[RMDB]
RNA sequence: GGGAACGACUCGAGUAGAGUCGAAAAGAACGUUCAAGCAAGCUAGCCGGCAAAAAAGCAAACUUGACCACCAAGGAUAAAAGAGAUCUUAUCCAAGGAUGCAAAAGAUAAUCUCACUUUUGACACCAAAACAGGGAGUAGUUCGCUACUCCCUGAACACAUACGUUUUCUUCGGAAAACGUAUGUGAAAAGAAACAACAACAACAAC
Reactivity to DMS in 0.01 (KOAc 150mM, MgCl2 10mM, bicine 150mM(pH8.5), 24C), signal-to-noise 2, nucleotides 027 to 156: g000a080a110c030g020u000u000c020a080a060g000c040a090a180g010c000u000a300g000c000c020g010g000c020a000a010a140a070a190a030g000c000a040a140a030c030u020u020g000a150c070c040a120c030c020a050a300g010g040a080u000a000a020a020a070g020a190g000a100u000c050u000u010a000u000c000c030a050a290g020g000a070u010g000c000a010a000a070a080g020a090u010a040a060u000c030u000c000a170c010u000u010u000u000g010a180c030a040c010c030a050a040a040a190c010a020g010g000g000a020g040u000a000g010u000u010c190g020c000u000a000c000u000c010c000c000u000g020a010a050
Reactivity to 2A3 in 0.01 (KOAc 150mM, MgCl2 10mM, bicine 150mM(pH8.5), 24C), signal-to-noise 3, nucleotides 027 to 156: g030a050a020c030g020u060u010c020a020a010g010c010a070a040g000c030u060a040g020c040c050g100g010c140a060a080a020a020a010a030g030c060a060a050a020c010u030u030g030a030c010c020a020c000c020a080a060g000g010a020u020a030a050a020a000g140a020g010a050u010c010u020u010a010u020c010c010a040a040g030g000a050u070g000c010a040a000a000a000g020a020u120a120a090u080c060u020c040a030c000u050u040u000u020g110a100c040a060c110c050a030a070a060a070c010a000g020g000g000a000g000u000a000g000u010u050c160g000c080u010a000c000u040c010c010c010u000g000a000a000